[RMDB]
Description:
Source: RMDB library OK3TST, as collected in RNAgym. Structure probing data (DMS and 2A3) for a 207-nucleotide construct. Values are in units of 0.01, from 0 to 300, in steps of 10. The reactions ran in a buffer of 150 mM KOAc, 10 mM MgCl2 and 150 mM bicine (pH 8.5), at 24 C. The 2A3 profile rests on 2,368 reads.
RNA sequence: GGGAACGACUCGAGUAGAGUCGAAAAAAGCAACAGAAGAUGGCCCAACAGUCUAUGCAAAUGGGUAUGGAUAAUGGUGCUGCUGCGCUGGCUCAAGGUAUGGCUGCACAAGCUACAGCUUCACCUGAGGCUAUGGCUGCUGCCGCUGAUUCCGUAGAGGUUAGCUUCUAUUCGUAGAAGCUAACCUAAAAGAAACAACAACAACAAC
Reactivity to DMS in 0.01 (KOAc 150mM, MgCl2 10mM, bicine 150mM(pH8.5), 24C), signal-to-noise 2, nucleotides 027 to 156: a060a070g030c020a050a090c010a080g020a100a090g010a100u000g010g010c030c010c020a100a150c090a080g000u000c040u000a040u000g060c040a020a100a110u000g030g050g060u000a040u000g020g010a030u000a050a130u000g010g000u000g040c020u000g020c020u000g030c050g010c060u000g010g020c020u010c040a120a070g010g000u010a140u000g010g020c000u010g060c040a080c040a080a140g000c030u010a000c010a030g010c010u000u000c060a070c040c070u000g000a140g010g010c000u000a070u010g020g020c020u000g000c010u010g010c000c020g020c010u000g010a130u000u000c000c000g030u010a180g000
Reactivity to 2A3 in 0.01 (KOAc 150mM, MgCl2 10mM, bicine 150mM(pH8.5), 24C), signal-to-noise 4, nucleotides 027 to 156: a000a000g070c090a040a090c040a020g050a080a010g110a130u110g060g000c010c000c000a020a030c050a070g040u010c010u070a040u100g040c050a020a130a130u170g080g040g020u080a060u070g050g000a010u040a140a070u180g020g000u060g070c050u020g010c000u030g000c040g030c060u020g040g000c010u020c060a060a030g000g010u020a030u140g040g000c010u010g000c030a040c020a120a020g000c000u050a020c010a020g010c000u050u040c070a130c100c130u130g010a000g040g000c000u030a060u090g050g000c010u070g040c030u000g010c010c010g000c030u020g020a080u120u050c010c020g020u030a080g020